[RMDB]
RNA sequence: GGGAACGACUCGAGUAGAGUCGAAAACUCAUGCUUCGGCAUGAGAAAAAGAUAUGGAUCUGGGAAAGCGACAAUGACUAUUAACAUCGGAAACGAUGUUAACGAAUCAUUGAGAACGCUUCAGAUCCUAAGUCAAAAAGUGCUGUUCGCAGCACAAGUACCUGUGCAUGUUCGCAUGCACAGGUACAAAAGAAACAACAACAACAAC
Reactivity to 2A3 in 0.01 (KOAc 150mM, MgCl2 10mM, bicine 150mM(pH8.5), 24C), signal-to-noise 4, nucleotides 027 to 156: c000u000c000a010u000g000c000u050u090c300g140g000c010a010u010g000a000g000a090a040a010a000a010g030a000u040a010u040g000g000a010u000c010u000g030g010g070a230a130a100g020c020g130a190c040a010a000u000g020a030c060u000a020u010u010a000a000c010a000u000c000g020g030a050a040a070c030g000a010u000g000u000u000a010a000c000g070a080a300u000c000a010u000u030g010a040g010a120a070c050g000c000u010u000c000a000g000a000u000c000c000u010a040a010g030u010c040a020a020a030a140a050g010u000g000c000u020g050u150u130c300g010c150a010g000c020a000c000a000a000
Reactivity to DMS in 0.01 (KOAc 150mM, MgCl2 10mM, bicine 150mM(pH8.5), 24C), signal-to-noise 1, nucleotides 027 to 156: c000u010c000a000u010g000c000u010u000c300g020g070c020a010u000g010a000g000a030a050a120a300a220g010a020u000a300u000g020g000a000u000c020u020g000g000g000a010a120a050g000c000g000a300c000a010a000u000g010a040c020u000a140u000u000a000a020c010a020u000c060g000g020a140a190a210c000g040a030u000g010u000u000a000a000c040g000a080a030u000c000a040u000u010g000a050g010a090a080c020g000c040u040u000c020a000g020a070u000c010c000u000a010a130g030u000c040a070a100a080a080a080g010u000g030c000u010g000u000u000c280g050c080a080g000c000a020c010a050a270